[RMDB]
RNA sequence: GGGAACGACUCGAGUAGAGUCGAAAAUGACAUAUUUGAAUUGCAGUAGUCGAUCCAGUUGGCUAGGGUUGAAGGUUCAGUGACAUGUGUAAUCUGGACAUUUACAUAAAGUAGAAUUAAAGACCUCAACGGUCAGGAUAUUCGUAUCCUGACCGUUAAAAGAAACAACAACAACAAC
Reactivity to DMS in 0.01 (KOAc 150mM, MgCl2 10mM, bicine 150mM(pH8.5), 24C), signal-to-noise 2, nucleotides 027 to 126: u000g000a090c060a010u000a110u000u020u020g000a090a100u010u010g000c070a070g010u000a050g040u010c010g030a040u000c040c020a060g020u000u020g000g000c090u000a140g000g000g020u010u010g020a130a120g000g050u000u000c030a050g000u000g020a080c130a070u010g020u010g000u000a040a080u010c020u000g050g010a080c150a100u000u020u030a020c020a070u000a050a040a220g010u000a040g010a080a030u030u000a070a060a130g000a060c040c030u000c150